[RMDB]
RNA sequence: GGGAACGACUCGAGUAGAGUCGAAAAGCGCUGUUUGCCUGGUCAGCAAAAAAGCAUCUCCUUAUGUCAGCUAUGAAGCCGUGAUGCAUAAACGUGAGCAGCGCCGUAAGUCGCUGGAGUUUUUCCGUUCUCAUGAACUGGUGAACGAAGACGGCGAGGGUUACAGUGAGUUCGCUCACUGUAACCCAAAAGAAACAACAACAACAAC
Reactivity to 2A3 in 0.01 (KOAc 150mM, MgCl2 10mM, bicine 150mM(pH8.5), 24C), signal-to-noise 3, nucleotides 027 to 156: g030c010g000c020u020g000u030u040u010g030c010c040u110g050g110u100c050a010g010c060a090a030a040a010a000a050g040c010a050u000c020u080c020c030u080u130a040u170g150u140c090a020g000c070u040a050u300g140a190a010g030c100c030g070u050g070a000u050g000c010a020u220a090a070a030c030g000u030g050a010g030c020a000g010c000g010c000c000g050u090a030a030g040u030c000g000c000u030g040g040a080g030u060u020u000u120u040c000c000g000u000u000c090u040c040a110u300g040a020a030c050u130g000g000u010g020a000a010c000g020a050a010g040a040c020g000g000c000g000a120